[RMDB]
RNA sequence: GGGAACGACUCGAGUAGAGUCGAAAAGGGGUCUAGUCCGUUGAUCUGGGAAGGCUCGAGGAUCGUAACUGAAGCCUCCACGGUUACGGGAGAGCCUUUCAGGGAGGACUAGACGGAGGCACCCAAAGGUACGCCUUUGUUCGCAAAGGCGUACCAAGAUAACCAAUUCGUUCGCGAAUUGGUUAUCAAAAGAAACAACAACAACAAC
Reactivity to 2A3 in 0.01 (KOAc 150mM, MgCl2 10mM, bicine 150mM(pH8.5), 24C), signal-to-noise 2, nucleotides 027 to 156: g030g010g050g000u010c000u000a010g010u000c000c000g070u100u010g000a000u000c000u020g100g090g150a050a030g020g020c010u010c020g050a300g010g000a000u000c010g010u000a000a000c000u020g060a050a020g020c000c000u000c010c000a020c010g000g000u000u010a000c000g000g000g000a020g000a010g000c050c000u000u000u000c000a000g010g000g000a000g000g000a000c000u000a000g000a000c000g000g000a000g000g000c000a030c000c020c000a070a070a010g000g000u000a000c000g000c000c020u030u000u010g040u050u130c260g010c150a010a010a000g000g010c000g000u010a000c000c000a000a000